[RMDB]
RNA sequence: GGGAACGACUCGAGUAGAGUCGAAAACUUCGUCAAGGAUAACGAAGUAGCAACUUUGCAAUCCAACAGCGAUUAUAUUGAAACGAAGGUUUCCUCUUACCGCAAUGGCUACUUGACUUUGGACCACCCGUGACUCCGCAUUCGUGCGGAGUCACGGAAAAGAAACAACAACAACAAC
Reactivity to 2A3 in 0.01 (KOAc 150mM, MgCl2 10mM, bicine 150mM(pH8.5), 24C), signal-to-noise 2, nucleotides 027 to 126: c000u020u040c000g000u000c080a120a060g060g000a110u100a120a070c110g040a060a020g040u010a000g010c120a130a180c000u150u030u020g000c040a000a050u110c030c030a030a100c000a300g110c060g160a050u250u050a110u150a050u160u210g010a090a000a000c000g000a170a000g080g000u000u000u000c000c000u000c070u060u210a030c070c060g110c150a060a080u130g030g030c000u000a000c090u050u000g030a050c000u050u000u010g010g090a090c000c000a020c000
The record gives the reactivity of an RNA of 177 nucleotides to 2A3. Reactivities are given for positions 27 through 126. For 2A3 the reverse transcriptase was SuperScript II with manganese. It was measured as part of the RMDB library OK1LIB. The RNA was probed in 150 mM KOAc, 10 mM MgCl2 and 150 mM bicine (pH 8.5) at 24 C.